Structure probing data (2A3 and DMS) for a 207-nucleotide construct. DMS adducts were read by reverse transcription with MarathonRT. For 2A3 the reverse transcriptase was SuperScript II with manganese. The data come from the RNA Mapping Database (RMDB), library M2RFPK. For 2A3, 10,648 sequencing reads were counted. Reactivities are given for positions 27 through 156. The reactions ran in a buffer of 150 mM KOAc, 10 mM MgCl2 and 150 mM bicine (pH 8.5), at 24 C. In probing experiments dimethyl sulfate is read out at A N1 and C N3, which are open when not base-paired. For DMS, 15,314 sequencing reads were counted.

[RMDB]
RNA sequence: GGGAACGACUCGAGUAGAGUCGAAAAGGCUGCGUAUCACUCUAGGGUACGUCAUAGUGCGAUAUAAGAAGCACUGGUACAUGCCGGCAGGGACAGUUAAGAGAUGGCCGCAGUCUCGUGUCCCUGCAAAAGGAGUUCUCGUUCGCGAGAACUCCAAUCCAUAUUGAAAGUUCGCUUUCAAUAUGGAAAAAGAAACAACAACAACAAC
Reactivity to 2A3 in 0.01 (KOAc 150mM, MgCl2 10mM, bicine 150mM(pH8.5), 24C), signal-to-noise 8, nucleotides 027 to 156: g020g000c010u010g000c020g010u030a030u040c030a080c170u160c150u210a120g080g000g020u020a010c020g010u010c020a050u090a060g000u000g000c030g040a020u040a020u070a280a110g130a110a010g000c010a000c010u010g010g010u090a060c040a050u140g010c000c020g020g000c000a000g010g000g000a010c000a050g030u130u160a180a030g020a000g000a010u040g090g040c070c040g050c070a020g010u010c000u000c010g030u030g010u010c000c000c010u000g000c000a000a000a000a010g000g000a000g000u000u010c000u000c000g010u040u040c150g010c010g110a000g000a000a000c000u000c000c000a000a000
Reactivity to DMS in 0.01 (KOAc 150mM, MgCl2 10mM, bicine 150mM(pH8.5), 24C), signal-to-noise 5, nucleotides 027 to 156: g020g040c010u000g010c020g020u000a080u000c040a100c060u000c130u000a120g020g030g030u000a030c030g030u000c060a160u000a030g050u000g020c000g020a160u000a140u010a140a220g030a160a280g000c010a010c010u000g020g010u000a080c090a100u010g010c020c020g000g000c010a030g020g000g010a020c010a060g020u000u000a130a140g010a080g010a060u010g010g020c080c170g010c070a240g010u000c000u000c000g000u000g020u000c000c000c010u010g010c010a020a020a060a110g000g010a030g030u010u000c000u000c010g020u000u010c240g000c020g000a020g000a010a010c000u000c000c000a000a070